[RMDB]
RNA sequence: GGGAACGACUCGAGUAGAGUCGAAAAGAUAUGGACAGGAAGUAGACAUGCUAUAUCGGAAACGAUGAUAGCAACAGCUACCCUGUCCUAAGUCAAAGCUAGAAAACCGUUCGCGGUUUUCUAGCAACUGGCAUAUGUAGUUCGCUACAUAUGCCAGAAAAGAAACAACAACAACAAC
Reactivity to DMS in 0.01 (KOAc 150mM, MgCl2 10mM, bicine 150mM(pH8.5), 24C), signal-to-noise 2, nucleotides 027 to 126: g010a030u000a270u010g000g010a020c000a010g010g010a130a130g010u010a000g010a130c160a240u000g000c000u000a010u000a050u000c030g010g000a080a100a160c000g020a020u000g020a000u000a000g010c000a060a080c270a190g000c020u000a010c010c000c000u010g010u000c000c000u010a010a050g000u000c000a140a110a160g000c000u010a010g000a020a000a000a010c000c000g020u000u010c160g030c000g020g010u000u000u000u000c000u000a000g000c000a020a010
Reactivity to 2A3 in 0.01 (KOAc 150mM, MgCl2 10mM, bicine 150mM(pH8.5), 24C), signal-to-noise 2, nucleotides 027 to 126: g000a000u020a020u070g000g000a000c000a000g000g070a300a140g040u010a000g030a140c120a190u050g000c000u000a000u000a000u040c000g000g030a060a010a000c000g000a010u180g110a030u080a010g010c010a060a060c100a040g010c010u010a000c010c020c000u000g000u020c000c010u000a060a000g000u000c020a140a040a140g000c000u020a000g000a000a010a010a000c000c020g010u080u120c300g000c050g110g000u020u020u000u000c010u010a010g000c000a000a000